[RMDB]
An RNA of 177 nucleotides, treated with DMS and 2A3 and read out base by base. High DMS reactivity at an A or C suggests that its Watson-Crick edge is free. DMS adducts were read by reverse transcription with MarathonRT. The RNA was probed in 150 mM KOAc, 10 mM MgCl2 and 150 mM bicine (pH 8.5) at 24 C.
RNA sequence: GGGAACGACUCGAGUAGAGUCGAAAAGACGCUGAUGCGAUCGACUGUAAGAUAGAUAGACUGAGCAGACAGAUACGUACGGCAAGUAUCGUCGCCAGAAAUACAGUCGCAAAUUGCCGUACGAAGAAGUCGAUGAUUAUUUCGAUAAUCAUCGACUAAAAGAAACAACAACAACAAC
Reactivity to DMS in 0.01 (KOAc 150mM, MgCl2 10mM, bicine 150mM(pH8.5), 24C), signal-to-noise 4, nucleotides 027 to 126: g000a100c040g040c040u000g010a140u040g050c020g010a180u010c000g010a060c020u000g030u020a000a040g000a120u030a130g020a180u040a080g010a300c020u000g020a100g030c000a090g040a010c020a120g000a050u030a030c000g000u030a000c000g000g000c000a020a030g010u000a030u020c060g010u000c000g030c020c010a020g000a050a100a060u000a000c040a020g000u000c000g010c260a020a090a080u010u010g010c030c000g020u000a050c130g020a120a100g030a120
Reactivity to 2A3 in 0.01 (KOAc 150mM, MgCl2 10mM, bicine 150mM(pH8.5), 24C), signal-to-noise 9, nucleotides 027 to 126: g090a020c040g020c070u190g090a190u300g020c020g080a090u060c020g000a010c000u010g000u020a050a020g110a290u140a030g160a080u110a060g160a080c010u020g010a010g060c080a070g020a040c000a010g070a060u110a120c020g020u020a000c010g000g000c000a010a010g040u050a060u120c060g000u000c000g000c000c000a020g050a020a030a000u050a000c000a000g000u000c010g000c040a070a110a030u010u010g000c000c000g000u010a030c050g020a040a040g080a020